Conditions: 150 mM KOAc, 10 mM MgCl2 and 150 mM bicine (pH 8.5), 24 C. The record gives the reactivity of an RNA of 170 nucleotides to DMS and 2A3. DMS adducts were read by reverse transcription with MarathonRT.
RNA sequence: GGGAACGACUCGAGUAGAGUCGAAAAUUCCAUAUUUGUAGACUGGCGGUCAUACAAUUAUGCUGUGUCUAGUGCCUUCUGGUUAUUCACCCACAUUCCAAUGGCGGGUUUGGUACGAAUGUAUAAUAAAUCAAUGAGUUCGCUCAUUGAAAAAGAAACAACAACAACAAC
Reactivity to DMS in 0.01 (KOAc 150mM, MgCl2 10mM, bicine 150mM(pH8.5), 24C), signal-to-noise 7, nucleotides 027 to 129: u020u040c040c010a120u010a000u010u000u010g030u000a010g010a030c000u020g030g030c180g040g000u030c090a030u050a000c100a020a060u040u030a060u020g000c080u020g050u000g010u050c050u020a040g010u030g030c040c030u010u010c090u000g040g010u030u030a080u030u030c140a140c010c000c010a080c110a110u010u010c110c140a070a060u030g030g010c170g030g030g030u000u000u000g000g020u050a010c070g000a050a020u000g020u020a070u030a030a030u060a000a090a090
Reactivity to 2A3 in 0.01 (KOAc 150mM, MgCl2 10mM, bicine 150mM(pH8.5), 24C), signal-to-noise 8, nucleotides 027 to 129: u040u010c010c020a010u050a030u120u110u100g060u010a000g010a030c020u040g090g040c090g060g000u080c030a040u060a060c050a040a070u130u070a050u180g050c030u040g010u000g040u090c010u020a040g040u040g070c010c000u100u080c040u100g080g010u090u070a110u110u120c040a020c020c000c000a000c000a050u160u130c030c040a110a050u030g040g030c000g060g000g000u090u060u060g010g000u010a030c020g070a090a030u060g070u030a040u040a100a100u120a030a070a030